[RMDB]
RNA sequence: GGGAACGACUCGAGUAGAGUCGAAAAAAACGAACUGGGAGAUAGCUGGUUCUCUCCGAAAUAGCUUUAGGGCUAGCGUCGAAAUGUAAGUGUAUUGGAGGUAGAGCACUGUUUGGGUGAGGGGUCCGUCUAGGAUUACCAAUCUCAGAUAAACUCCGAACUAUACUAUCUUCGGAUAGUAUAGUUCAAAAGAAACAACAACAACAAC
Reactivity to 2A3 in 0.01 (KOAc 150mM, MgCl2 10mM, bicine 150mM(pH8.5), 24C), signal-to-noise 5, nucleotides 027 to 156: a000a000a020c040g030a050a010c040u060g010g050g000a050g040a090u100a070g080c040u030g060g000u060u000c020u010c000u000c020c010g050a060a070a050u060a030g020c010u090u090u120a110g040g020g010c020u010a010g000c020g080u050c030g030a010a070a050u160g020u110a030a100g030u030g020u050a080u090u100g020g030a030g020g020u100a030g020a000g050c020a010c050u020g020u040u040u010g010g010g000u020g010a020g010g000g010g000u000c010c000g030u070c120u140a060g000g020a010u020u050a220c000c000a010a030u010c020u000c020a000g000a010u030a030a140a040c030u020c050c030
Reactivity to DMS in 0.01 (KOAc 150mM, MgCl2 10mM, bicine 150mM(pH8.5), 24C), signal-to-noise 4, nucleotides 027 to 156: a040a070a080c040g000a080a060c060u000g000g010g030a090g010a080u000a070g020c020u000g020g010u000u000c010u010c030u000c020c040g000a100a080a080u000a040g020c030u000u000u000a150g020g020g000c010u000a020g040c080g020u000c050g000a030a070a090u000g020u010a060a070g010u000g020u000a130u000u000g010g010a040g030g000u000a070g010a070g050c020a070c070u000g010u010u010u000g010g000g010u000g020a300g010g000g010g020u000c010c010g030u010c110u000a130g020g010a030u000u010a110c050c060a040a290u000c000u000c000a020g020a030u000a050a060a050c020u000c030c110

An RNA of 207 nucleotides, treated with 2A3 and DMS and read out base by base. The 2A3 profile rests on 4,121 reads. Source: RMDB library PDB130, as collected in RNAgym. As a SHAPE reagent, 2A3 marks flexible, mostly unpaired nucleotides at the ribose 2'-OH. DMS adducts were read by reverse transcription with MarathonRT.